[RMDB]
Structure probing data (DMS and 2A3) for a 177-nucleotide construct. Reactivities are given for positions 27 through 126. It was measured as part of the RMDB library TTRDEL. DMS adducts were read by reverse transcription with MarathonRT.
RNA sequence: GGGAACGACUCGAGUAGAGUCGAAAAGAUAUGGAUCUGAACUACACGGAUAACAGCGAAGAACUCGGAAACGAGGGAGCUGCUAAUACGUGCAGAUCCUAAGUCAAAAUCUAGGUUCGCCUAGAAACAUACACCCAAAGUUCGCUUUGGGUGUAUGAAAAGAAACAACAACAACAAC
Reactivity to DMS in 0.01 (KOAc 150mM, MgCl2 10mM, bicine 150mM(pH8.5), 24C), signal-to-noise 4, nucleotides 027 to 126: g000a050u000a300u010g000g010a020u010c000u000g000a070a030c060u010a300c010a020c000g000g010a060u000a110a110c010a000g000c000g000a110a120g000a100a190c000u000c000g010g000a120a070a180c010g010a020g010g010g000a080g000c000u000g010c000u000a070a060u010a030c000g000u000g000c000a000g000a010u000c000c000u010a020a070g010u010c050a070a050a130a130u000c010u000a000g000g020u000u020c270g000c010c000u000a010g000a030a090a170
Reactivity to 2A3 in 0.01 (KOAc 150mM, MgCl2 10mM, bicine 150mM(pH8.5), 24C), signal-to-noise 4, nucleotides 027 to 126: g020a020u070a040u120g000g010a020u010c000u010g020a070a060c070u160a050c300a000c030g020g000a020u060a140a020c000a010g040c020g220a300a040g040a130a060c000u000c000g020g020a040a060a050c010g020a010g000g030g000a020g000c000u010g000c010u040a040a030u220a160c010g000u010g000c000a000g000a000u000c000c000u020a050a020g030u000c020a020a030a030a300u010c010u010a000g000g050u040u060c280g080c060c000u010a010g010a020a010a000